[RMDB]
Source information: Source: RMDB library OK3TST, as collected in RNAgym. The record gives the reactivity of an RNA of 207 nucleotides to 2A3. 2A3 is a SHAPE reagent: it acylates the 2'-hydroxyl of flexible nucleotides of all four kinds. The reactions ran in a buffer of 150 mM KOAc, 10 mM MgCl2 and 150 mM bicine (pH 8.5), at 24 C.

RNA sequence: GGGAACGACUCGAGUAGAGUCGAAAACCCAUCCCACCUGUCAGGAUCGAGUCUUCAUCCUCCACAGUGGCCGAGGGCCAGACCCUGGAUCUGAGCUGCGUGGUGGCAGGGCAGGCCCACGCCCAGGUCACAUGGUACAAGCGUGGGGGCAGCCUCACUAGGGUUUUACUUUCGAGUAAAACCCUAGAAAAGAAACAACAACAACAAC
Reactivity to 2A3 in 0.01 (KOAc 150mM, MgCl2 10mM, bicine 150mM(pH8.5), 24C), signal-to-noise 1, nucleotides 027 to 156: c000c010c000a020u020c000c000c130a120c000c000u080g050u080c030a040g000g010a080u080c100g030a010g090u010c030u140u060c120a100u030c030c010u030c040c000a050c050a100g010u040g050g000c020c010g130a130g030g020g000c050c000a060g070a190c000c000c000u040g030g000a020u030c020u020g040a020g090c020u010g040c020g070u030g030g030u000g100g060c000a010g050g010g000c040a040g020g120c010c020c000a070c040g040c010c010c000a020g000g030u020c040a040c040a160u070g000g000u080a120c040a130a010g030c050g090u000g000g000g010g040g000c020a010g000c050c010u000c000a050
2A3 adducts were read by reverse transcription with SuperScript II with manganese.